RNA sequence: GGGAACGACUCGAGUAGAGUCGAAAAGAUAUGGAGCCUUGAAUUAAUGGGUUUGAGCGAUAAGUCGGUGUCGGAAACGACAUGCGACUUUUGACGCUUUAUCCAUUAAUUCAAGGCUCCUAAGUCACAUAUUUCCUCUCUUCGGAGAGGAAAUAUGAAAAGAAACAACAACAACAAC
Reactivity to DMS in 0.01 (KOAc 150mM, MgCl2 10mM, bicine 150mM(pH8.5), 24C), signal-to-noise 2, nucleotides 027 to 126: g000a070u000a300u000g020g000a000g030c010c000u020u000g010a020a000u000u000a010a000u000g000g000g000u000u010u000g020a010g010c000g020a240u000a020a010g010u000c010g010g040u000g000u000c010g010g010a190a100a250c020g020a000c000a000u000g020c010g030a010c010u010u000u000u000g020a230c100g000c010u000u020u000a010u010c000c000a010u000u000a010a010u000u000c000a000a000g010g000c010u000c000c000u000a000a040g010u000c040a300